[RMDB]
RNA sequence: GGGAACGACUCGAGUAGAGUCGAAAACAUAUGACGGAGAGUGGAACACUCAGCGGAAACGCAUCCAAUGUCUGAAGUCUUUAAUGGGUAUAACAGUCAGUUGACCCAGAUCCCAACUGACAAUAAAGGGUAGUUUCUUAUUCGUAAGAAACUACCCAAAAGAAACAACAACAACAAC
Reactivity to DMS in 0.01 (KOAc 150mM, MgCl2 10mM, bicine 150mM(pH8.5), 24C), signal-to-noise 2, nucleotides 027 to 126: c130a110u000a110u000g040a040c040g000g020a110g000a060g030u000g000g020a150a170c090a060c010u020c060a130g020c030g000g000a050a060a120c060g000c050a300u040c040c010a040a060u010g000u000c000u030g000a130a060g000u000c030u000u000u000a110a130u000g000g000g020u010a030u030a040a030c070a170g000u010c180a060g010u020u000g020a050c000c000c000a040g000a110u000c040c030c000a090a050c070u000g000a030c050a050a060u000a050a110a070
Reactivity to 2A3 in 0.01 (KOAc 150mM, MgCl2 10mM, bicine 150mM(pH8.5), 24C), signal-to-noise 1, nucleotides 027 to 126: c000a000u160a030u220g050a040c050g040g010a060g000a020g080u120g010g140a060a000c050a020c080u070c020a030g050c000g040g000a130a030a020c030g010c000a000u050c000c000a030a110u120g110u020c000u010g050a060a020g000u000c030u050u080u090a110a050u120g000g060g070u010a140u040a300a040c020a050g100u040c000a020g010u040u010g060a040c000c000c020a000g040a060u070c000c010c020a000a000c010u030g020a030c000a080a050u180a080a050a040
Structure probing data (DMS and 2A3) for a 177-nucleotide construct. For DMS the reverse transcriptase was MarathonRT. Values cover nucleotides 27 to 126. The RNA was probed in 150 mM KOAc, 10 mM MgCl2 and 150 mM bicine (pH 8.5) at 24 C.